[RMDB]
About this RNA:
Chemical mapping of a 207-nucleotide RNA with 2A3. The RNA was probed in 150 mM KOAc, 10 mM MgCl2 and 150 mM bicine (pH 8.5) at 24 C. Values cover nucleotides 27 to 156. For 2A3, 430 sequencing reads were counted.

RNA sequence: GGGAACGACUCGAGUAGAGUCGAAAAUCGGGUUCUGGUGGUCGAUGAUGAGCCAAACAUCGUCGAGCUGUUAAAAGUAAGCCUGAAAUUCCAAGGCUUUGAGGUAGAAACCGCCCAAUCAGGGAUUGAAGCUUUAGAAAAGGCCCGUUCUUUUCAAGCUAAUAGUGCAGUUCGCUGCACUAUUAGCAAAAGAAACAACAACAACAAC
Reactivity to 2A3 in 0.01 (KOAc 150mM, MgCl2 10mM, bicine 150mM(pH8.5), 24C), signal-to-noise 1, nucleotides 027 to 156: u090c010g000g010g000u120u270c000u050g020g040u110g020g050u110c010g000a010u010g000a000u000g050a080g170c060c030a010a040a080c020a000u000c000g000u000c000g050a030g010c030u040g010u080u110a040a040a020a050g050u040a070a000g020c050c000u010g020a090a030a090u140u000c000c000a000a130g060g000c030u000u040u110g050a130g000g000u030a110g110a190a220a050c060c120g050c000c000c020a010a050u190c060a050g000g000g050a050u040u040g010a070a000g000c000u050u160u150a140g050a040a200a020a000g020g020c000c000c000g010u000u070c020u120u080u050u090c030a030a020